[RMDB]
Structure probing data (2A3 and DMS) for a 177-nucleotide construct.
For DMS the reverse transcriptase was MarathonRT.
2A3 adducts were read by reverse transcription with SuperScript II with manganese.
Values cover nucleotides 27 to 126.
For DMS, 19,447 sequencing reads were counted.
RNA sequence: GGGAACGACUCGAGUAGAGUCGAAAAGUGGGCGCUAGGUGUGGGUUCCAUCCACAGGAUCUGUGCCGUAGCUAACGCAUUAAGCGCCCCGCGUGGGGAGUACAGCAGCAAAGCUAAAACUCAAACGAAAUAAUAUGAAAUUCGUUUCAUAUUAUUUAAAAGAAACAACAACAACAAC
Reactivity to 2A3 in 0.01 (KOAc 150mM, MgCl2 10mM, bicine 150mM(pH8.5), 24C), signal-to-noise 3, nucleotides 027 to 126: g080u120g000g000g000c000g000c010u020a020g000g000u010g000u010g020g010g000u030u000c010c010a040u020c010c000a020c000a010g010g000a010u000c000u010g020u010g010c000c000g030u040a010g000c030u060a070a020c040g000c000a010u040u040a070a000g000c000g000c000c000c000c000g000c010g010u050g010g060g010g010a000g010u020a020c010a040g020c010a010g040c070a060a040a030g000c010u050a020a020a020a040c030u030c000a050a020a010c030g020
Reactivity to DMS in 0.01 (KOAc 150mM, MgCl2 10mM, bicine 150mM(pH8.5), 24C), signal-to-noise 8, nucleotides 027 to 126: g020u030g000g000g000c000g020c000u000a070g000g020u000g010u000g000g010g020u000u000c010c020a090u010c020c030a010c030a250g000g000a010u000c000u000g000u010g010c020c020g020u020a100g010c020u000a120a140c220g000c020a110u040u010a060a200g000c020g000c000c000c010c040g010c060g010u010g010g000g000g000a020g000u000a060c260a020g010c020a070g000c190a080a090a090g010c030u010a060a070a130a070c030u000c030a050a060a100c150g000